Source: RMDB library RSTRND, as collected in RNAgym. Structure probing data (DMS and 2A3) for a 207-nucleotide construct. Reactivities are given for positions 27 through 156.
[RMDB]
RNA sequence: GGGAACGACUCGAGUAGAGUCGAAAACUCGAGGUGCAUGUCGAGAAUGAGAGAAUCUCGUUAAAUACUUUCAAAACUUAUAGUUGCAAACGACGACAACUACGCUUUAGCGGCUUAAUUCCCGCUUUCGCUUACCUAGAUUUGUCUGUGGGUUUACGGAAUGUAUUAACUUCGGUUAAUACAUUCCAAAAGAAACAACAACAACAAC
Reactivity to DMS in 0.01 (KOAc 150mM, MgCl2 10mM, bicine 150mM(pH8.5), 24C), signal-to-noise 2, nucleotides 027 to 156: c030u000c020g000a100g020g040u000g020c040a090u010g020u000c030g000a050g010a040a160u010g020a040g000a060g000a070a140u000c000u000c020g000u000u010a010a040a030u000a020c010u010u000u030c020a110a110a120a110c060u000u000a070u000a080g020u000u010g000c000a030a060a110c050g000a080c040g050a030c040a040a080c030u010a040c080g010c080u010u000u000a070g020c020g010g080c050u000u000a100a250u020u010c070c000c000g000c030u000u000u000c020g000c020u000u000a060c000c020u010a090g000a110u000u000u000g010u000c030u010g000u000g010g020g000u000u000u010a100c280
Reactivity to 2A3 in 0.01 (KOAc 150mM, MgCl2 10mM, bicine 150mM(pH8.5), 24C), signal-to-noise 6, nucleotides 027 to 156: c030u020c020g040a050g030g050u120g040c080a080u100g080u140c010g000a000g010a020a020u060g010a020g000a000g010a030a050u030c010u000c010g060u010u020a020a020a020u090a230c000u040u040u030c040a090a110a060a040c040u150u130a050u070a200g010u010u030g020c030a070a100a080c070g050a000c020g020a020c030a020a010c010u090a030c050g010c010u020u020u040a010g010c000g030g000c010u070u130a080a050u200u120c000c000c000g000c000u010u030u020c020g000c020u040u060a050c010c040u050a070g030a270u040u060u090g060u030c120u050g050u070g040g110g000u040u060u060a030c050